The record gives the reactivity of an RNA of 177 nucleotides to 2A3 and DMS. Source: RMDB library OK1LIB, as collected in RNAgym.
RNA sequence: GGGAACGACUCGAGUAGAGUCGAAAACUAGGGAGGGUUCGAGCUCGAGCUCGAUCCACAGAGAACUGGUCUCGACCGGGAAGGCCUAGGUCGAGGAUGAAGACUCUAGGUCUCUGGGACACGAGACGCGCCUAUCUACCUUCGGGUAGGUAGGCGCAAAAGAAACAACAACAACAAC
Reactivity to 2A3 in 0.01 (KOAc 150mM, MgCl2 10mM, bicine 150mM(pH8.5), 24C), signal-to-noise 4, nucleotides 027 to 126: c060u080a080g040g140g090a160g060g080g020u050u040c010g000a050g000c040u120c230g130a070g000c000u010c030g030a020u030c000c000a080c020a030g160a000g010a130a120c120u180g040g020u020c000u010c010g040a030c010c010g040g020g020a080a090g050g000c020c000u020a020g000g000u000c020g050a080g060g100a040u170g050a060a000g020a030c040u060c000u300a020g000g000u000c010u000c000u030g040g000g060a040c050a040c160g000a000g000a010c000
Reactivity to DMS in 0.01 (KOAc 150mM, MgCl2 10mM, bicine 150mM(pH8.5), 24C), signal-to-noise 3, nucleotides 027 to 126: c010u000a070g000g030g000a150g030g010g000u030u000c000g000a050g000c000u000c300g000a170g040c050u010c010g030a030u000c000c000a060c140a130g030a090g010a140a090c110u030g010g050u000c000u000c000g010a120c000c000g000g060g000a100a070g000g020c010c000u010a000g000g000u000c030g010a200g020g020a080u060g000a240a150g000a020c000u030c000u000a000g010g010u000c000u000c000u000g000g010g020a160c140a090c030g020a030g000a020c000